[RMDB]
RNA sequence: GGGAACGACUCGAGUAGAGUCGAAAAAAAUGUCCUGCAUAACACCUAAUGCUAGAAUAUGAACUUUCCUCACUGCUGGAAUUCUAAAAACCUAAUGACCUGUCAUCUCCUCUAUUGGCAGAUGAUAGAUGGUCAUGACAGCAAAAAAGUAAAUGUCCAAUACGGUCACGUUCGCGUGACCGUAUUGAAAAGAAACAACAACAACAAC
Reactivity to DMS in 0.01 (KOAc 150mM, MgCl2 10mM, bicine 150mM(pH8.5), 24C), signal-to-noise 1, nucleotides 027 to 156: a060a110a040u010g000u010c030c060u000g080c000a120u010a030a080c120a120c100c100u000a150a080u010g000c030u000a050g000a100a050u010a060u000g010a120a060c130u000u000u000c010c020u000c080a190c080u000g020c030u030g000g000a040a190u010u000c080u020a040a050a030a110a030c040c040u000a140a010u000g010a050c010c010u010g000u000c000a010u010c000u010c000c000u000c090u000a220u000u000g000g020c070a050g010a050u010g000a010u000a030g020a030u010g070g030u000c000a000u010g000a140c170a100g050c030a000a010a070a050a070a110g080u010a030a060a120u010g000u000c040
Reactivity to 2A3 in 0.01 (KOAc 150mM, MgCl2 10mM, bicine 150mM(pH8.5), 24C), signal-to-noise 3, nucleotides 027 to 156: a000a000a000u060g000u010c030c000u000g000c010a030u070a090a050c080a130c070c030u090a070a030u050g020c020u060a040g030a120a100u170a180u200g070a050a040c010u020u050u070c010c010u040c030a060c050u070g050c020u000g020g080a100a070u110u050c060u220a120a120a070a110a110c010c120u130a100a030u060g030a010c000c000u000g010u010c000a000u000c000u000c000c030u050c090u290a190u160u050g000g000c040a000g000a020u000g000a000u000a030g090a050u140g000g000u000c000a010u000g020a000c000a000g000c000a000a000a050a020a030a090g090u110a060a100a130u160g020u080c010